[RMDB]
Description: The record gives the reactivity of an RNA of 177 nucleotides to DMS and 2A3. DMS adducts were read by reverse transcription with MarathonRT. For 2A3, 3,337 sequencing reads were counted. For 2A3 the reverse transcriptase was SuperScript II with manganese. For DMS, 2,245 sequencing reads were counted. Values cover nucleotides 27 to 126.
RNA sequence: GGGAACGACUCGAGUAGAGUCGAAAAAGCAAGAAACCACAGGUAGUGACGAUUGAGCCGACCGACAAGGCGUUCAAGACGCACGGCUGCCAACCCUGGCAGAACACGGGCAGCGAAGGCGCUGCCCCUUCAUCACUAACUUCGGUUAGUGAUGAAGAAAAGAAACAACAACAACAAC
Reactivity to DMS in 0.01 (KOAc 150mM, MgCl2 10mM, bicine 150mM(pH8.5), 24C), signal-to-noise 3, nucleotides 027 to 126: a050g010c120a070a070g000a130a080a070c040c030a060c120a080g030g020u010a060g000u020g020a120c020g010a300u000u000g000a060g000c080c040g020a160c020c000g010a080c190a100a130g000g000c040g000u000u000c090a040a030g000a050c100g000c040a060c070g010g010c020u000g000c030c010a030a100c140c060c120u000g000g000c010a020g000a060a030c100a090c140g000g000g010c000a010g010c010g000a140a120g030g010c070g030c020u000g000c000c000c010
Reactivity to 2A3 in 0.01 (KOAc 150mM, MgCl2 10mM, bicine 150mM(pH8.5), 24C), signal-to-noise 3, nucleotides 027 to 126: a000g090c090a060a030g060a160a140a050c030c020a050c030a080g070g110u160a060g020u120g050a060c020g010a040u020u040g000a010g060c070c030g200a250c010c030g060a120c130a120a080g000g000c010g000u040u010c050a020a020g050a040c010g000c010a000c010g020g000c010u000g000c000c000a040a140c040c030c030u030g030g000c030a010g030a060a010c090a020c050g010g000g000c020a000g010c000g060a230a120g190g050c040g000c020u000g000c010c000c010